[RMDB]
RNA sequence: GGGAACGACUCGAGUAGAGUCGAAAAGAUAUGGAAUACGCUGACCACGAUGACGGUCGGAAACGACCGCAUUAUCAAGCGUUCCUAAGUCAAAACCUGCCGUGAUCCUUCGGGAUCACGGCAGGAACAUCACAUGUAUCUUCGGAUACAUGUGAUGAAAAGAAACAACAACAACAAC
Reactivity to DMS in 0.01 (KOAc 150mM, MgCl2 10mM, bicine 150mM(pH8.5), 24C), signal-to-noise 4, nucleotides 027 to 126: g020a060u020a290u020g000g020a040a050u020a060c050g010c000u000g000a120c300c230a120c220g020a020u000g000a130c000g010g000u000c000g020g010a040a080a170c000g010a010c010c000g020c020a000u000u000a090u000c060a130a060g010c000g010u000u010c000c000u000a040a140g000u000c040a070a090a100a150c010c000u000g000c000c000g000u000g000a000u000c000c000u000u030c200g030g000g000a020u000c000a000c000g000g010c000a000g000g010a010a050
Reactivity to 2A3 in 0.01 (KOAc 150mM, MgCl2 10mM, bicine 150mM(pH8.5), 24C), signal-to-noise 3, nucleotides 027 to 126: g010a020u090a040u150g020g050a050a060u210a210c070g000c020u030g050a100c060c100a140c300g010a000u020g120a110c000g000g000u010c000g010g010a040a060a010c000g000a000c000c000g000c010a020u040u050a140u140c120a110a000g000c010g000u020u000c000c000u040a130a020g030u040c020a020a030a140a250c000c000u020g000c020c010g020u020g030a000u010c020c030u060u110c300g080g000g000a000u010c000a000c020g010g030c000a000g000g000a000a000
Chemical mapping of a 177-nucleotide RNA with DMS and 2A3. For DMS the reverse transcriptase was MarathonRT. The RNA was probed in 150 mM KOAc, 10 mM MgCl2 and 150 mM bicine (pH 8.5) at 24 C. Reactivities are given for positions 27 through 126. The data come from the RNA Mapping Database (RMDB), library TTRDEL. For 2A3 the reverse transcriptase was SuperScript II with manganese.